[RMDB]
RNA sequence: GGGAACGACUCGAGUAGAGUCGAAAAAAGAUCAUAGGAACCGCCGUCAAGAACAACAUGGCUGUGCAUAGUGAUCUAUCAUACUGGAUAGAGAGCGGACUCAACGACACCUGGAAGCUUGAGAGGGGCACUUAGCUCAAUUCGUUGAGCUAAGUGCAAAAGAAACAACAACAACAAC
Reactivity to DMS in 0.01 (KOAc 150mM, MgCl2 10mM, bicine 150mM(pH8.5), 24C), signal-to-noise 2, nucleotides 027 to 126: a080a020g000a100u000c010a050u020a150g040g000a290a040c030c080g020c020c020g010u000c090a090a040g000a100a120c120a090a100c100a020u010g000g000c040u000g030u000g010c100a100u010a110g040u000g010a080u000c000u000a020u000c030a100u010a110c160u020g000g010a120u040a040g010a030g060a160g060c020g020g010a040c040u000c040a080a050c030g010a060c100a060c020c010u020g030g000a070a090g000c110u000u010g010a050g020a080g020g020g000
Reactivity to 2A3 in 0.01 (KOAc 150mM, MgCl2 10mM, bicine 150mM(pH8.5), 24C), signal-to-noise 1, nucleotides 027 to 126: a000a010g090a080u060c010a090u090a060g090g010a050a030c000c000g000c010c030g040u030c030a040a020g090a170a110c020a010a000c000a110u070g060g000c030u000g040u060g030c080a100u100a110g090u010g020a010u000c010u020a020u030c080a010u050a240c110u180g110g000a010u040a020g060a000g000a010g070c020g050g020a010c010u000c040a050a060c030g030a010c020a010c010c010u000g020g070a090a010g080c080u110u110g010a010g000a010g140g000g050

This 177-nucleotide RNA was probed chemically with DMS and 2A3. The reactions ran in a buffer of 150 mM KOAc, 10 mM MgCl2 and 150 mM bicine (pH 8.5), at 24 C. Reactivities are given for positions 27 through 126. For 2A3, 833 sequencing reads were counted. The data come from the RNA Mapping Database (RMDB), library OK2TRN.